[RMDB]
RNA sequence: GGGAACGACUCGAGUAGAGUCGAAAAUUUGCAUACGCUGCUUAAUUAAUUAAGUAGCCGUUCCAGCCACUGAGCCUGCGCGGUGGUGAGUGAACGUCAUUUUGCAGGAUAGGCCAAGAGCUUCGGUCCGGAGCUGGCGGCUGAGACUCAAUCGGGCGAAGGUAACCAUGUUCGCAUGGUUACCUUCAAAAGAAACAACAACAACAAC
Reactivity to 2A3 in 0.01 (KOAc 150mM, MgCl2 10mM, bicine 150mM(pH8.5), 24C), signal-to-noise 2, nucleotides 027 to 156: u180u130u240g060c050a100u120a210c090g000c000u000g010c030u000u010a010a010u150u130a190a230u110u000a180a000g000u010a000g000c010c010g000u000u000c000c020a030g000c000c000a000c000u010g000a010g010c010c000u000g000c000g030c000g000g020u000g010g050u050g020a060g010u230g010a000a030c040g020u110c050a060u040u200u170u150g000c000a000g000g000a000u020a030g000g000c000c000a020a030g000a000g020c000u020u010c040g000g010u000c000c000g000g000a000g010c000u000g030g000c000g000g000c000u020g000a000g020a010c030u120c200a020a010u090c000g000g030g000c000
The record gives the reactivity of an RNA of 207 nucleotides to 2A3. Reactivities are given for positions 27 through 156.